[RMDB]
An RNA of 177 nucleotides, treated with 2A3 and DMS and read out base by base. For DMS the reverse transcriptase was MarathonRT. For DMS, 865 sequencing reads were counted. The RNA was probed in 150 mM KOAc, 10 mM MgCl2 and 150 mM bicine (pH 8.5) at 24 C. It was measured as part of the RMDB library OK1LIB. Values cover nucleotides 27 to 126. The 2A3 profile rests on 473 reads.
RNA sequence: GGGAACGACUCGAGUAGAGUCGAAAAGCCGCCGGCCCCGAGAUUUCGGCAGGGGCAUUGCUGGAGCUCAACCCGUCCGUCCCGGCGGAUUGGCAUCCGGAAAGGAGGAGGGCGAGGGCGCAGGUGGAAUGCGGUGGGAGUUCGCUCCCACCGCAUUAAAAGAAACAACAACAACAAC
Reactivity to 2A3 in 0.01 (KOAc 150mM, MgCl2 10mM, bicine 150mM(pH8.5), 24C), signal-to-noise 1, nucleotides 027 to 126: g020c000c000g000c020c090g120g000c000c000c000c000g000a030g000a050u230u290u260c010g010g070c050a140g000g060g000g030c040a000u000u070g030c000u000g020g120a010g000c000u000c080a040a040c000c000c000g080u020c030c020g120u110c000c000c000g050g130c000g040g040a040u000u180g040g030c000a030u040c000c000g000g010a110a050a050g000g020a000g000g100a070g000g060g000c120g100a250g000g010g000c110g040c050a070g010g020u030g010g000
Reactivity to DMS in 0.01 (KOAc 150mM, MgCl2 10mM, bicine 150mM(pH8.5), 24C), signal-to-noise 1, nucleotides 027 to 126: g010c030c010g070c010c000g100g000c000c000c040c100g000a120g010a080u000u000u000c030g000g080c040a300g000g010g000g050c230a000u070u000g000c000u000g010g000a110g010c050u000c000a070a080c060c020c000g000u070c000c010g000u000c070c020c000g030g000c100g000g000a000u000u000g020g040c060a200u000c050c000g020g000a110a130a080g000g000a300g000g000a220g000g000g040c050g000a260g050g020g000c020g000c120a060g000g000u010g000g000